[RMDB]
RNA sequence: GGGAACGACUCGAGUAGAGUCGAAAAGGAGUGGUCGAUGACCGAGGACCCGCUCUACACGGCGUGGGCCCUACGUGCGCUGUGCGAGGCGUACCGGUACAGGGACCUACUGGGGCUCGACGACGCGCAGUAAGCGGGGGUUCGCCCCCGCUUACUGAAAAGAAACAACAACAACAAC
Reactivity to 2A3 in 0.01 (KOAc 150mM, MgCl2 10mM, bicine 150mM(pH8.5), 24C), signal-to-noise 1, nucleotides 027 to 126: g090g000a090g020u060g010g080u090c050g050a120u090g090a140c000c040g010a060g000g080a050c030c000c000g050c000u030c030u070a200c130a060c110g020g040c030g000u070g060g000g000c010c010c000u010a070c080g040u030g030c030g050c070u030g080u170g050c060g070a130g020g050c030g000u020a090c000c050g050g000u060a110c040a030g020g010g040a060c000c000u020a020c030u030g000g000g000g010c000u010c050g020a020c060g010a000c030g000c000g000
Reactivity to DMS in 0.01 (KOAc 150mM, MgCl2 10mM, bicine 150mM(pH8.5), 24C), signal-to-noise 2, nucleotides 027 to 126: g000g010a100g030u000g020g070u000c020g020a140u030g020a080c020c020g010a070g020g010a130c040c030c010g020c040u000c070u000a130c180a100c110g010g030c070g010u000g000g000g030c010c000c010u010a070c160g000u000g010c020g020c000u000g000u010g020c130g010a130g000g010c040g000u000a070c030c040g010g020u000a070c080a120g000g010g000a110c070c060u010a030c010u010g000g000g000g000c040u000c010g000a030c030g000a040c000g010c130g040
Conditions: 150 mM KOAc, 10 mM MgCl2 and 150 mM bicine (pH 8.5), 24 C. The record gives the reactivity of an RNA of 177 nucleotides to 2A3 and DMS. The 2A3 profile rests on 1,007 reads. 2A3 is a SHAPE reagent: it acylates the 2'-hydroxyl of flexible nucleotides of all four kinds. For DMS, 1,457 sequencing reads were counted. 2A3 adducts were read by reverse transcription with SuperScript II with manganese.